[RMDB]
RNA sequence: GGGAACGACUCGAGUAGAGUCGAAAAGACUGACCGAAACUUGUGCCGCCACGUGCGUGACAUCGAAGUUCGAUCCUGAGGUGGGCCACGUGGGUAGCGUCCUUCCUCACGCAGAGGUCAAGUUGGUCAUGACCUUAUGUUUCGACAUAAGGUCAUGAAAAGAAACAACAACAACAAC
Reactivity to DMS in 0.01 (KOAc 150mM, MgCl2 10mM, bicine 150mM(pH8.5), 24C), signal-to-noise 6, nucleotides 027 to 126: g010a170c110u010g010a030c020c030g000a100a060a030c020u000u010g000u010g030c010c000g000c010c010a020c040g020u000g000c180g030u000g000a120c030a010u000c030g010a220a040g000u000u000c240g000a110u010c170c030u020g000a290g000g040u000g010g000g010c020c030a010c010g010u010g000g010g010u000a090g000c020g000u000c060c070u000u000c020c000u010c300a020c030g010c020a120g010a140g020g010u000c010a010a010g010u010u000g010g020u000
Reactivity to 2A3 in 0.01 (KOAc 150mM, MgCl2 10mM, bicine 150mM(pH8.5), 24C), signal-to-noise 4, nucleotides 027 to 126: g050a020c100u080g040a030c020c060g080a110a060a020c000u040u010g080u230g090c010c010g060c030c000a020c040g020u020g040c150g070u040g120a180c000a020u020c020g020a010a000g020u150u230c100g050a120u140c040c030u030g010a020g010g000u010g000g020g010c040c010a010c000g010u040g000g020g010u020a010g010c000g000u050c000c040u070u000c000c000u050c000a010c010g010c010a000g050a040g170g010u010c000a010a010g010u080u080g030g040u010
Structure probing data (DMS and 2A3) for a 177-nucleotide construct. The RNA was probed in 150 mM KOAc, 10 mM MgCl2 and 150 mM bicine (pH 8.5) at 24 C. It was measured as part of the RMDB library OK2TRN.